Structure probing data (2A3) for a 207-nucleotide construct. Conditions: 150 mM KOAc, 10 mM MgCl2 and 150 mM bicine (pH 8.5), 24 C. Source: RMDB library OK3TST, as collected in RNAgym.

[RMDB]
RNA sequence: GGGAACGACUCGAGUAGAGUCGAAAAGUCGCGGAAGCUGACACGGGAAGAGGUAGCUUCGGCGUACUUCAUCCCGCCGCCCAUGAUCGGUCUGUUGGACAACGCCACGUUCUCCAACAUCAAGGAACAGCACAAGCAUCUUUACCAGGACACGCUCGGUAGCGAAAAAUUUCGAUUUUUCGCUACCAAAAGAAACAACAACAACAAC
Reactivity to 2A3 in 0.01 (KOAc 150mM, MgCl2 10mM, bicine 150mM(pH8.5), 24C), signal-to-noise 3, nucleotides 027 to 156: g010u010c030g000c030g090g040a030a040g010c020u080g070a070c020a050c100g150g050g050a140a060g110a130g070g020u030a020g000c000u040u040c070g050g000c020g060u060a020c000u000u040c010a090u000c010c000c000g030c020c030g000c010c010c010a070u090g070a120u100c040g020g070u050c050u070g000u030u000g000g000a000c000a040a010c040g130c100c110a130c100g010u050u010c030u000c000c010a020a020c020a040u110c020a020a050g040g000a040a080c010a020g020c040a030c010a040a050g040c010a040u050c030u050u120u080a050c020c070a020g010g050a020c020a020c110g050c150u240c100